[RMDB]
RNA sequence: GGGAACGACUCGAGUAGAGUCGAAAAGGAUCGCGCGGCUCGAGCGUACGCAGGUGAUCGCCGGCUACAGCGUGCGGCUCGGGCAGGACGUGCUCGACGCGAGCAUCUACGCGUACGUCGGCAUCAACCGAGUGAUUAGGUUCGCCUAAUCACUCGGAAAAGAAACAACAACAACAAC
Reactivity to DMS in 0.01 (KOAc 150mM, MgCl2 10mM, bicine 150mM(pH8.5), 24C), signal-to-noise 3, nucleotides 027 to 126: g010g020a050u000c070g020c020g010c070g000g030c000u000c020g010a040g010c020g020u010a030c020g040c000a150g010g000u000g010a080u000c120g040c060c070g010g000c060u000a100c110a110g010c020g000u000g020c050g020g050c020u010c000g010g020g000c010a040g010g000a130c120g010u000g000c050u000c010g010a140c150g010c040g000a060g000c060a050u010c110u000a130c040g050c020g020u000a110c150g030u010c010g000g010c050a080u000c050a080a210
Reactivity to 2A3 in 0.01 (KOAc 150mM, MgCl2 10mM, bicine 150mM(pH8.5), 24C), signal-to-noise 2, nucleotides 027 to 126: g050g020a100u050c030g000c010g000c030g100g010c010u000c020g010a020g020c020g020u010a000c020g000c030a010g070g070u080g050a100u090c140g000c020c040g040g000c020u120a100c040a050g010c010g000u010g000c020g140g000c000u010c000g030g000g000c000a000g000g040a030c070g050u040g000c010u000c020g150a130c070g090c100g070a020g050c010a060u010c030u040a010c060g000c000g020u030a060c080g020u020c000g000g010c030a040u030c020a060a080